[RMDB]
RNA sequence: GGGAACGACUCGAGUAGAGUCGAAAAGAUAUGGAUCCCACUACCCACCAACUAGCCUCGGAAACGAGGCAUGUUGAGGUGGGAGUCCUAAGUCAAACUUGGUUUAUCCUUCGGGAUAAACCAAGAAGUUCUACAUGUACUUCGGUACAUGUAGAACAAAAGAAACAACAACAACAAC
Reactivity to DMS in 0.01 (KOAc 150mM, MgCl2 10mM, bicine 150mM(pH8.5), 24C), signal-to-noise 4, nucleotides 027 to 126: g000a110u010a190u000g010g010a240u010c000c000c000a070c010u000a100c000c020c050a300c120c010a010a000c010u010a300g000c010c000u000c000g000g010a090a070a230c030g000a010g000g010c000a010u000g000u000u000g000a110g050g000u000g000g010g000a010g000u010c000c010u000a090a150g000u020c080a080a060a180c000u000u000g000g020u000u000u000a000u000c000c000u000u010c220g050g040g010a000u000a000a010a000c000c000a000a000g000a030a100
Reactivity to 2A3 in 0.01 (KOAc 150mM, MgCl2 10mM, bicine 150mM(pH8.5), 24C), signal-to-noise 3, nucleotides 027 to 126: g060a020u220a180u300g000g030a030u060c010c010c010a010c010u180a170c030c050c010a040c040c000a030a000c020u030a050g020c000c000u020c020g000g010a100a090a040c010g010a000g000g020c000a000u010g000u010u000g050a030g000g010u010g020g000g000a000g110u060c010c010u120a120a070g150u180c110a100a080a140c050u010u010g000g000u040u000u000a000u020c010c020u010u120c300g080g010g000a000u000a010a000a000c010c000a000a000g000a000a000
The data come from the RNA Mapping Database (RMDB), library TTRDEL.
The record gives the reactivity of an RNA of 177 nucleotides to DMS and 2A3.
The RNA was probed in 150 mM KOAc, 10 mM MgCl2 and 150 mM bicine (pH 8.5) at 24 C.
Values cover nucleotides 27 to 126.